[RMDB]
RNA sequence: GGGAACGACUCGAGUAGAGUCGAAAACGUCUGUCCUCCUUCGGAUGCCCAGGUCGGACCGCGAGGAGGUGGAGAUGCCAUGCCGACCCGAAGAGGAAGAAGAGGACAUGGACGCGAACCGUGAGUGUGAUCGAGGUCUUCGGACCUCGAAAAAGAAACAACAACAACAAC
Reactivity to 2A3 in 0.01 (KOAc 150mM, MgCl2 10mM, bicine 150mM(pH8.5), 24C), signal-to-noise 3, nucleotides 027 to 129: c000g040u000c000u020g040u010c020c010u030c010c000u050u070c030g090g010a020u070g060c000c030c000a040g010g060u060c040g000g030a110c010c020g070c030g030a050g050g050a030g030g000u050g010g000a230g040a020u110g030c000c000a050u080g000c000c000g020a000c000c000c040g060a110a050g030a010g080g020a000a040g020a000a020g050a060g000g000a000c020a060u060g030g010a000c050g000c030g000a020a020c010c000g050u050g010a080g040u080g000u090g010a010
Reactivity to DMS in 0.01 (KOAc 150mM, MgCl2 10mM, bicine 150mM(pH8.5), 24C), signal-to-noise 2, nucleotides 027 to 129: c050g000u000c000u040g020u020c030c020u030c000c000u040u020c030g080g000a150u150g020c050c030c020a140g010g060u020c040g030g020a200c060c150g060c130g000a090g090g000a090g050g100u050g000g000a070g010a110u120g030c070c030a080u050g050c060c000g010a060c000c000c000g050a100a100g000a000g000g010a120a030g010a060a030g030a140g030g000a040c090a070u030g030g010a070c080g020c160g060a000a190c050c030g000u000g020a000g030u060g010u000g050a140
Description:
Conditions: 150 mM KOAc, 10 mM MgCl2 and 150 mM bicine (pH 8.5), 24 C. Structure probing data (2A3 and DMS) for a 170-nucleotide construct. The DMS profile rests on 9,991 reads. The 2A3 profile rests on 4,508 reads. For DMS the reverse transcriptase was MarathonRT.